Structure probing data (DMS and 2A3) for a 207-nucleotide construct. 2A3 adducts were read by reverse transcription with SuperScript II with manganese. The RNA was probed in 150 mM KOAc, 10 mM MgCl2 and 150 mM bicine (pH 8.5) at 24 C. For 2A3, 1,182 sequencing reads were counted. The data come from the RNA Mapping Database (RMDB), library PDB130. Values cover nucleotides 27 to 156.
[RMDB]
RNA sequence: GGGAACGACUCGAGUAGAGUCGAAAACUCUAACGGGUGUAAGUCCCGAACAUGCCCAGGUAGUGGGAAAUGUAUAGCCGAACAGCAAGGGUGUCUACUGUGAGGUGGAAUCUGAAGGAAGCUGUAAGCGAAUCUCUGGUCCGACGGACAGAAAUCGGAUGGUUUAUGUGUUCGCACAUAAACCAUCAAAAGAAACAACAACAACAAC
Reactivity to DMS in 0.01 (KOAc 150mM, MgCl2 10mM, bicine 150mM(pH8.5), 24C), signal-to-noise 1, nucleotides 027 to 156: c010u000c020u010a080a200c060g000g030g010u000g000u040a050a170g000u000c000c010c020g000a090a040c110a090u020g010c000c010c010a050g040g020u000a060g020u000g010g020g030a060a070a000u000g000u000a130u000a220g010c020c000g000a110a130c050a070g030c040a100a120g010g040g010u000g010u000c010u000a050c000u000g000u000g000a300g040g020u000g000g020a160a070u010c040u000g040a100a070g000g020a020a170g010c010u000g040u000a150a090g020c030g000a100a150u000c060u000c020u000g040g000u010c020c000g000a080c170g020g030a040c010a060g000a010a070a050u000c060g030
Reactivity to 2A3 in 0.01 (KOAc 150mM, MgCl2 10mM, bicine 150mM(pH8.5), 24C), signal-to-noise 3, nucleotides 027 to 156: c010u000c040u070a060a020c000g000g010g000u010g030u050a040a040g050u010c020c000c010g000a020a010c010a020u060g000c000c000c000a080g160g090u160a110g140u040g000g030g000a030a110a000u060g020u020a120u030a080g040c040c020g040a160a020c010a000g080c040a060a090g070g000g020u080g050u040c010u010a020c010u030g030u050g080a010g060g000u010g010g000a000a060u010c040u060g060a090a060g070g030a100a000g060c030u010g040u120a090a030g000c030g040a060a150u050c030u000c000u120g130g070u050c030c080g130a090c110g030g000a000c000a040g040a010a110a020u090c050g010